[RMDB]
RNA sequence: GGGAACGACUCGAGUAGAGUCGAAAAGAUGGCAUGUCAGCCCGCGAAGCAGCCGAAGCUGGAGCACGCUUGAUUAGCGAUAAGCUGCGAGAAUCUGGCUUUGACAAUUUCGACGCUUAUGCGCACGCGUGGGCGUUAUGUUCGCAUAACGCCCACGAAAAGAAACAACAACAACAAC
Reactivity to 2A3 in 0.01 (KOAc 150mM, MgCl2 10mM, bicine 150mM(pH8.5), 24C), signal-to-noise 1, nucleotides 027 to 126: g080a060u110g020g050c000a020u090g030u180c040a000g030c020c020c000g040c010g000a020a010g000c100a010g010c020c020g030a030a000g030c040u040g000g020a040g050c020a010c150g050c030u000u090g100a130u180u220a030g000c010g000a010u000a200a000g010c040u020g000c000g000a070g060a030a070u020c000u000g010g010c000u040u060u070g000a070c030a020a000u030u120u100c050g030a030c030g050c060u190u000a050u190g100c080g000c000a080c100g030
Reactivity to DMS in 0.01 (KOAc 150mM, MgCl2 10mM, bicine 150mM(pH8.5), 24C), signal-to-noise 1, nucleotides 027 to 126: g010a210u000g000g020c040a020u000g010u000c100a090g020c020c050c020g050c040g010a080a060g020c210a180g010c000c030g000a020a070g000c010u000g000g000a030g010c210a100c120g000c050u030u010g010a110u000u010a040g030c160g000a060u000a050a060g000c000u000g000c010g000a050g000a110a130u000c040u000g010g020c000u000u010u040g000a040c020a050a110u000u000u000c030g010a100c120g000c030u020u030a020u000g010c060g010c080a080c170g010